[RMDB]
RNA sequence: GGGAACGACUCGAGUAGAGUCGAAAACGUAAGGGCGUCCGGGCCGUAAUGCUGUCACAGAAUCAGCUCUACGCUGGCGGCGAAGGCUAUGCCUGGAUUGUGUUUUCAGAUGACGGAGACGCCCGCCCCACAUGAGCAUCUUCGGAUGCUCAUGUGGAAAAGAAACAACAACAACAAC
Reactivity to DMS in 0.01 (KOAc 150mM, MgCl2 10mM, bicine 150mM(pH8.5), 24C), signal-to-noise 1, nucleotides 027 to 126: c150g000u080a090a100g020g000g020c000g000u000c000c180g000g000g000c120c050g000u070a060a020u040g000c000u000g000u000c030a050c030a160g060a040a020u000c080a080g000c030u000c080u030a140c240g020c010u000g040g000c040g000g000c020g020a200a050g000g020c010u040a030u010g020c080c000u010g010g000a040u000u000g020u010g000u030u040u020u120c070a040g000a090u000g000a010c000g000g010a170g000a020c000g050c000c010c000g000c100c050
Reactivity to 2A3 in 0.01 (KOAc 150mM, MgCl2 10mM, bicine 150mM(pH8.5), 24C), signal-to-noise 3, nucleotides 027 to 126: c050g050u100a060a150g000g000g010c010g020u010c030c010g060g140g010c030c010g010u060a040a090u260g030c010u040g000u060c000a020c000a110g110a060a110u150c070a060g010c030u020c050u040a050c090g090c090u030g010g040c020g040g010c020g000a040a020g020g000c020u070a100u190g040c030c020u000g000g010a000u070u140g130u050g110u140u050u030u080c030a070g000a090u070g050a050c060g060g010a060g000a040c000g000c000c000c020g030c000c000